About this RNA
Conditions: 150 mM KOAc, 10 mM MgCl2 and 150 mM bicine (pH 8.5), 24 C. Chemical mapping of a 177-nucleotide RNA with DMS and 2A3.
[RMDB]
RNA sequence: GGGAACGACUCGAGUAGAGUCGAAAAGCGCUAGGUGAUAAAGGCUGAAAGCAUCUAAGCCUGAGGUAUCCCCUGAAAAUAGAUUGCUUAGGACGUGAGUAGAAGACUUGUUUGAUGGGGUAGGGAUGAAACAUACAAAUUUCGAUUUGUAUGUUUCAAAAGAAACAACAACAACAAC
Reactivity to DMS in 0.01 (KOAc 150mM, MgCl2 10mM, bicine 150mM(pH8.5), 24C), signal-to-noise 9, nucleotides 027 to 126: g010c070g020c040u000a040g010g020u000g010a060u010a080a110a060g010g010c020u000g000a120a110a120g010c050a040u020c020u000a130a160g010c020c000u010g010a070g010g010u010a100u010c020c010c000c040u010g010a090a030a060a080u010a050g010a090u010u010g010c010u000u000a090g000g010a060c080g010u010g000a070g010u010a060g000a090a080g000a080c110u000u000g010u010u010u010g010a110u010g010g000g000g010u010a060g000g000g010a230u010
Reactivity to 2A3 in 0.01 (KOAc 150mM, MgCl2 10mM, bicine 150mM(pH8.5), 24C), signal-to-noise 9, nucleotides 027 to 126: g040c040g010c070u040a020g000g020u020g020a050u070a090a140a020g040g010c010u020g120a080a060a020g040c010a030u030c020u040a050a020g010c000c000u030g030a040g050g030u100a110u100c010c000c000c010u040g050a040a010a020a010u090a030g110a100u040u120g000c000u050u050a040g060g050a060c060g060u070g050a040g020u060a030g060a160a010g040a060c030u060u070g050u070u070u060g050a070u050g010g000g000g030u040a050g020g050g010a010u070